This 207-nucleotide RNA was probed chemically with DMS and 2A3. The DMS profile rests on 3,073 reads. For DMS the reverse transcriptase was MarathonRT.
[RMDB]
RNA sequence: GGGAACGACUCGAGUAGAGUCGAAAAAGCAGUCCAAGUCUGCAUAUCAAAUAAAUGAUGGAGGAGAUGGGUGGUAGGACCUUCCAGACCUCAUAAAACUUAGGCUUUAUGAUCUGGGACUCACAGAAGGUUGAGCAAUAAAAGACCUUAGGGAUUAUAAUAUAAAUGGAUUCGUCCAUUUAUAUUAAAAAGAAACAACAACAACAAC
Reactivity to DMS in 0.01 (KOAc 150mM, MgCl2 10mM, bicine 150mM(pH8.5), 24C), signal-to-noise 2, nucleotides 027 to 156: a160g030c020a000g010u010c020c120a100a300g040u010c020u000g000c020a120u000a140u010c070a070a130a110u000a070a100a080u010g010a050u020g000g000a090g000g000a120g010a080u010g020g000g020u000g020g000u000a070g020g010a040c030c060u000u000c000c000a020g000a050c030c140u000c060a020u000a000a000a040a020c030u000u010a150g060g000c020u010u000u000a010u010g010a020u010c030u000g000g000g000a100c060u010c050a090c050a110g010a040a040g060g030u010u010g000a100g000c030a050a080u000a050a090a080a220g010a060c060c020u000u020a070g020g010g000a160u000u020a140
Reactivity to 2A3 in 0.01 (KOAc 150mM, MgCl2 10mM, bicine 150mM(pH8.5), 24C), signal-to-noise 2, nucleotides 027 to 156: a000g000c000a000g020u070c100c020a030a010g080u060c020u030g000c020a050u050a030u210c050a020a110a180u200a090a130a070u140g010a040u060g020g010a060g020g010a050g020a040u090g000g030g030u060g020g030u040a030g020g060a040c000c000u050u000c010c000a020g020a040c000c080u000c000a000u040a010a010a000a010c040u090u120a030g130g000c000u020u010u030a000u010g010a000u050c010u000g030g000g020a030c010u000c050a090c000a030g100a100a020g030g000u050u030g010a000g030c030a050a020u100a170a150a030a030g100a040c080c000u030u050a030g010g070g020a040u230u250a080
The RNA was probed in 150 mM KOAc, 10 mM MgCl2 and 150 mM bicine (pH 8.5) at 24 C.